[RMDB]
RNA sequence: GGGAACGACUCGAGUAGAGUCGAAAAAGCGUGGUAAUGCUCCGCUGGAGAAUAGGGCGGUCUUGAAUAAACAAAUCAGUAGUUUGAAGUUUAAUAAUCCAGAGGAUUAUCCGAGUGACGUGUAUCAUAGACCGGGGGACAGAGUCUAUUGGCGACAGCUAUUAUCUCACUUCGGUGAGAUAAUAGCAAAAGAAACAACAACAACAAC
Reactivity to DMS in 0.01 (KOAc 150mM, MgCl2 10mM, bicine 150mM(pH8.5), 24C), signal-to-noise 1, nucleotides 027 to 156: a100g020c050g040u010g030g020u010a070a080u000g010c050u000c000c030g060c050u000g000g000a080g020a060a060u000a110g040g010g000c040g010g000u000c040u000u000g010a070a080u010a050a090a160c010a120a070a110u010c040a190g010u010a110g030u000u000u000g010a140a200g020u000u000u010a040a060u000a010a160u010c000c040a140g020a150g010g040a070u000u000a040u000c020c020g040a180g030u000g010a040c010g010u000g030u020a060u000c040a130u040a090g010a050c000c040g000g000g010g020g000a070c110a080g000a080g020u000c030u000a160u000u000g040g020c050g000a070c060a120
Reactivity to 2A3 in 0.01 (KOAc 150mM, MgCl2 10mM, bicine 150mM(pH8.5), 24C), signal-to-noise 3, nucleotides 027 to 156: a000g040c060g000u020g030g000u090a070a050u160g030c030u020c050c050g040c060u090g010g040a080g020a030a170u100a100g030g000g020c040g000g040u030c040u020u060g040a030a030u140a080a050a030c040a010a100a060u150c050a040g040u100a000g020u090u070u160g070a130a010g010u040u060u210a150a060u070a010a030u030c010c010a040g020a080g120g010a020u040u000a020u060c030c040g020a030g010u050g010a020c010g000u020g020u060a030u130c020a030u050a050g040a060c020c000g020g010g000g030g010a040c070a050g020a010g020u030c020u060a070u110u080g050g000c050g090a020c030a010